Chemical mapping of a 177-nucleotide RNA with 2A3 and DMS. The RNA was probed in 150 mM KOAc, 10 mM MgCl2 and 150 mM bicine (pH 8.5) at 24 C. Reactivities are given for positions 27 through 126.
[RMDB]
RNA sequence: GGGAACGACUCGAGUAGAGUCGAAAAGCAAACAGUUCGGCAUGUCCUGGAACCUCAAGACCCAUCUGCGCGUUCACACCGGCGAAAAGCCGUUCGCCUGCCGCCUUUGCGUGGCCAUGUUCAAGCACUUCUGAACUAGUUUCGACUAGUUCAGAAGAAAAGAAACAACAACAACAAC
Reactivity to 2A3 in 0.01 (KOAc 150mM, MgCl2 10mM, bicine 150mM(pH8.5), 24C), signal-to-noise 5, nucleotides 027 to 126: g050c050a040a030a090c030a070g040u080u060c020g030g010c060a040u080g050u060c000c010u040g050g050a060a070c010c010u040c080a090a070g050a130c030c020c000a030u020c020u060g010c030g000c010g040u070u070c040a050c020a020c060c030g000g010c040g050a040a110a020a070g020c010c020g020u050u040c060g010c020c010u030g010c010c010g040c000c020u220u190u170g040c100g040u020g020g000c010c010a070u120g060u050u080c040a060a010g020c020a030
Reactivity to DMS in 0.01 (KOAc 150mM, MgCl2 10mM, bicine 150mM(pH8.5), 24C), signal-to-noise 6, nucleotides 027 to 126: g010c090a100a090a110c140a060g000u000u000c040g010g020c060a060u010g010u000c040c030u010g010g020a080a070c090c040u010c080a080a090g000a100c070c020c020a070u000c050u000g010c050g000c090g000u000u010c070a080c100a080c190c050g000g010c020g020a060a050a090a130g000c040c010g010u000u000c060g010c020c030u000g000c050c030g010c070c040u000u010u000g020c090g030u000g000g010c020c100a030u000g000u000u000c060a090a100g000c160a150